[RMDB]
RNA sequence: GGGAACGACUCGAGUAGAGUCGAAAAUUCGCGUACGCCCGGCAGCGAAAGCAGGGCUUCGGAAAGGAACCGGCGGUAGUGGUCCAUGUCCGAUACGCGUGCCUUGACCAGAUAAUCAAAGCCGCCACCAUUUAGUGAGCUUCGGCUCACUAAAUGGAAAAGAAACAACAACAACAAC
Reactivity to DMS in 0.01 (KOAc 150mM, MgCl2 10mM, bicine 150mM(pH8.5), 24C), signal-to-noise 1, nucleotides 027 to 126: u000u000c020g000c020g040u000a120c300g000c020c010c010g000g010c190a060g020c070g040a120a120a150g050c000a060g000g010g000c000u000u000c010g010g000a040a040a120g050g000a080a060c150c060g000g000c040g030g000u000a090g060u000g010g000u010c000c010a090u000g070u000c040c000g000a180u000a060c030g000c010g040u000g010c020c040u000u000g000a060c040c030a080g010a130u010a050a100u000c020a070a050a120g000c010c000g010c020c040a300